[RMDB]
RNA sequence: GGGAACGACUCGAGUAGAGUCGAAAACGCGACGAACUGAAGCUGAUCCUCCACUCCAGCCGCGCCCAGGACCCCAGCGACCAGGGCAUGCGCGUGCUGGCCUCGGCGGUGGAGCUGGGCGAGCUGACCAGGCAGUAUGAUUCGUCAUACUGCCUGGAAAAGAAACAACAACAACAAC
Reactivity to 2A3 in 0.01 (KOAc 150mM, MgCl2 10mM, bicine 150mM(pH8.5), 24C), signal-to-noise 3, nucleotides 027 to 126: c050g000c050g010a060c030g020a120a110c080u190g040a080a030g030c020u050g030a070u050c020c020u020c030c040a050c020u020c030c000a030g000c010c040g210c010g070c040c000c000a020g050g050a170c000c010c020c020a030g110c020g080a260c020c010a050g000g010g000c030a040u160g030c100g000c040g080u240g030c010u020g060g000c000c000u020c020g010g010c030g020g100u020g000g000a040g060c010u010g010g000g030c000g010a000g000c000u010g000a030
Reactivity to DMS in 0.01 (KOAc 150mM, MgCl2 10mM, bicine 150mM(pH8.5), 24C), signal-to-noise 3, nucleotides 027 to 126: c070g000c020g010a150c040g020a060a050c100u040g000a100a110g030c050u000g000a110u000c030c000u000c040c050a060c110u010c070c000a030g000c030c030g010c030g020c020c030c020a050g010g000a130c300c010c000c000a040g010c020g000a110c010c000a030g010g000g000c030a080u000g000c050g030c180g010u010g050c000u000g020g010c030c010u000c050g010g010c060g010g020u000g000g000a050g000c040u000g010g000g020c020g000a240g020c010u000g010a210

An RNA of 177 nucleotides, treated with 2A3 and DMS and read out base by base. Conditions: 150 mM KOAc, 10 mM MgCl2 and 150 mM bicine (pH 8.5), 24 C. It was measured as part of the RMDB library OK2TRN. The DMS profile rests on 3,041 reads.